[RMDB]
Conditions: 150 mM KOAc, 10 mM MgCl2 and 150 mM bicine (pH 8.5), 24 C.
This 177-nucleotide RNA was probed chemically with DMS.
RNA sequence: GGGAACGACUCGAGUAGAGUCGAAAAGUGUAAAUAGAGGAGUCAGGGCUCGCACCCGAUCCGCGAACCUAGGGUAACACUGACUGUGGAGCGAAAGAGAUAGCGAGAGAGAACUCGCUAUCAGCAACCGUCAGGUAGCCUUCGGGCUACCUGACGGAAAAGAAACAACAACAACAAC
Reactivity to DMS in 0.01 (KOAc 150mM, MgCl2 10mM, bicine 150mM(pH8.5), 24C), signal-to-noise 1, nucleotides 027 to 126: g000u010g000u010a030a050a080u030a160g000a180g020g030a270g000u090c030a040g010g010g000c050u000c090g000c100a060c000c000c000g000a000u010c000c020g000c030g000a030a060c110c040u000a080g000g030g200u030a130a140c090a140c030u030g000a010c050u030g000u010g000g000a150g000c000g020a000a200a090g010a160g000a010u000a000g000c020g020a000g010a080g060a280g000a260a130c000u000c000g010c050u000a000u000c000a010g000c180a150a060